[RMDB]
RNA sequence: GGGAACGACUCGAGUAGAGUCGAAAAGAUGAGAACAUACUGUUCAGUUGGGCGAUCAGGUGACACUCCAAUUCUUGCAGGAGGUCACGAGCAAGACAAAGAGGACGGCCUGACUUAACAAAAGAAACGCUGCACGAGUAUUCGUACUCGUGCAGCGAAAAGAAACAACAACAACAAC
Reactivity to 2A3 in 0.01 (KOAc 150mM, MgCl2 10mM, bicine 150mM(pH8.5), 24C), signal-to-noise 1, nucleotides 027 to 126: g260a130u170g090a010g000a150a030c000a030u190a220c030u000g000u010u020c000a000g000u090u000g000g000g000c040g090a280u040c140a060g270g000u000g000a000c100a130c040u040c000c130a000a050u150u100c100u130u300g000c000a030g080g080a000g000g000u010c000a000c080g000a010g000c110a060a000g080a200c010a000a080a000g030a090g020g050a000c000g080g000c000c000u000g000a000c000u000u000a000a000c000a000a030a030a010g160a070a030a000